This 177-nucleotide RNA was probed chemically with 2A3 and DMS. Reactivities are given for positions 27 through 126.

RNA sequence: GGGAACGACUCGAGUAGAGUCGAAAACAGCGCUCAACUCUGAAAAACAUCAAGACCAUGUGUCUCUAACUGUGCCACUCUGUGGUUCAGGAAACCUGGUUGAAAAACUUUCACCAUGGUUCAUGGACUUAAUAGUGCACUUCGGUGCACUAUUAAGAAAAGAAACAACAACAACAAC
Reactivity to 2A3 in 0.01 (KOAc 150mM, MgCl2 10mM, bicine 150mM(pH8.5), 24C), signal-to-noise 2, nucleotides 027 to 126: c010a000g030c020g020c050u020c050a020a090c030u020c020u100g030a060a020a020a050a030c040a090u110c070a080a000g070a080c010c000a030u050g030u000g040u010c010u000c000u060a050a060c000u010g000u010g010c000c000a000c000u220c060u130g010u010g010g000u000u010c000a000g020g000a000a020a000c020c000u000g050g020u120u180g050a020a030a010a050a060c050u040u000u000c000a010c010c010a020u130g000g000u040u030c010a020u050g000g010a000
Reactivity to DMS in 0.01 (KOAc 150mM, MgCl2 10mM, bicine 150mM(pH8.5), 24C), signal-to-noise 1, nucleotides 027 to 126: c120a090g000c060g050c020u010c060a050a090c060u000c040u000g000a060a050a120a100a060c080a060u000c090a060a060g010a140c020c000a020u000g010u000g000u000c040u010c030u010a120a160c020u000g020u000g000c030c010a000c010u010c230u010g010u000g000g010u000u000c010a020g000g000a050a000a000c040c020u000g000g010u000u010g020a000a020a110a190a160c270u000u000u000c020a040c010c000a000u010g000g010u000u000c050a040u000g000g000a300